[RMDB]
RNA sequence: GGGAACGACUCGAGUAGAGUCGAAAAGAUAUGGAUCGUGAACUACGCUUAAAUGCUCGAAGAACAGCUCUUUUUCUCGGAAACGAGAAAAAGAGCUGGGAGAGCUAUAAGCGCACGAUCCUAAGUCCGUAUUAAGCUGGUUCGCCAGCUUAAUACGAAAAGAAACAACAACAACAAC
Reactivity to DMS in 0.01 (KOAc 150mM, MgCl2 10mM, bicine 150mM(pH8.5), 24C), signal-to-noise 1, nucleotides 027 to 126: g040a080u010a240u000g010g020a030u000c000g010u000g000a110a070c190u030a300c060g100c000u010u010a010a010a130u010g020c000u000c000g000a090a130g010a140a250c040a010g020c000u020c000u000u000u000u000u000c000u000c030g010g000a140a090a280c020g000a000g000a060a020a000a010a000g010a020g000c000u000g000g000g000a160g010a000g000c020u000a300u000a020a000g000c000g010c020a000c010g000a030u000c000c000u000a000a060g000u000c030
Reactivity to 2A3 in 0.01 (KOAc 150mM, MgCl2 10mM, bicine 150mM(pH8.5), 24C), signal-to-noise 1, nucleotides 027 to 126: g080a000u120a050u300g000g000a020u000c020g030u030g030a110a190c190u280a150c300g000c020u060u060a060a000a160u300g000c020u040c050g170a260a100g060a260a030c030a000g000c000u010c000u050u000u030u000u040c010u000c060g030g050a130a110a130c010g000a000g030a030a000a000a000a000g010a000g060c010u000g000g000g000a040g000a000g060c010u000a020u000a020a010g060c020g000c000a030c000g000a000u060c000c000u010a020a030g000u080c030
This 177-nucleotide RNA was probed chemically with DMS and 2A3.
For 2A3 the reverse transcriptase was SuperScript II with manganese.
It was measured as part of the RMDB library TTRINS.
The RNA was probed in 150 mM KOAc, 10 mM MgCl2 and 150 mM bicine (pH 8.5) at 24 C.
For DMS the reverse transcriptase was MarathonRT.